Chemical mapping of a 207-nucleotide RNA with 2A3. For 2A3 the reverse transcriptase was SuperScript II with manganese.

[RMDB]
RNA sequence: GGGAACGACUCGAGUAGAGUCGAAAACUGGAUCCGAAGCCCCUAGAAGGAUAAUAUAGGCACUCCAUACCCUACUCCGACUCAAUACGUCCCCGUCGUACAGAAUGGUAACAUAUCUCUCCAAAUAAAAACGUUGUCUCGUUCGCGAGACAACGAACACUAGAUCCUGCUUCGGCAGGAUCUAGUGAAAAGAAACAACAACAACAAC
Reactivity to 2A3 in 0.01 (KOAc 150mM, MgCl2 10mM, bicine 150mM(pH8.5), 24C), signal-to-noise 1, nucleotides 027 to 156: c020u030g030g000a050u130c010c000g070a020a060g020c000c010c000c020u010a000g110a130a030g110g000a030u050a240a040u210a060u040a090g050g000c040a020c020u010c040c030a000u070a060c000c020c030u020a050c020u050c020c050g060a050c010u030c090a030a120u090a270c030g050u000c000c000c030c000g050u060c010g000u050a000c010a020g050a050a030u040g070g060u090a050a020c000a040u060a170u060c080u030c000u030c090c060a070a160a020u180a090a070a020a030a000c010g000u020u020g010u000c010u000c000g000u040u050c100g010c010g130a000g000a000c000a000a000c000g000a000a010
Conditions: 150 mM KOAc, 10 mM MgCl2 and 150 mM bicine (pH 8.5), 24 C.
The data come from the RNA Mapping Database (RMDB), library M2RFPK.